The record gives the reactivity of an RNA of 177 nucleotides to 2A3 and DMS.
For DMS, 31,164 sequencing reads were counted.
DMS adducts were read by reverse transcription with MarathonRT.
[RMDB]
RNA sequence: GGGAACGACUCGAGUAGAGUCGAAAAGAAGUGGCAGGGACAUGCCCCAUAAGCUCGUUCUAGCAACAUAUGUUUGGCUAGUUCGAGCGAUUAGUCUCGAGGAGCGUCCUCUCGCCUUUUCACGAGACACUGAUGAUUUAUUCGUAAAUCAUCAGUGAAAAGAAACAACAACAACAAC
Reactivity to 2A3 in 0.01 (KOAc 150mM, MgCl2 10mM, bicine 150mM(pH8.5), 24C), signal-to-noise 9, nucleotides 027 to 126: g060a040a020g050u060g030g000c020a020g030g010g020a030c040a070u190g020c000c000c010c000a070u060a120a040g010c000u000c000g000u000u000c000u000a000g010c020a010a080c020a090u300a080u300g150u120u100u100g140g020c000u000a000g000u000u000c000g000a000g000c000g000a000u000u030a020g070u020c040u040c160g040a180g010g020a110g020c020g010u010c010c000u060c020u040c060g000c000c000u030u010u010u010c050a060c050g080a060g020a030
Reactivity to DMS in 0.01 (KOAc 150mM, MgCl2 10mM, bicine 150mM(pH8.5), 24C), signal-to-noise 8, nucleotides 027 to 126: g010a060a070g010u020g000g030c020a120g000g000g010a060c110a120u030g010c050c010c020c050a110u020a110a160g000c000u010c000g010u000u000c000u000a010g010c010a050a020c030a230u040a130u060g010u030u010u010g020g020c000u000a000g000u000u000c000g000a010g000c000g000a010u030u020a060g010u020c040u010c060g000a110g000g000a160g010c100g000u000c010c010u010c040u010c100g020c030c030u000u000u000u000c020a160c080g000a100g010a200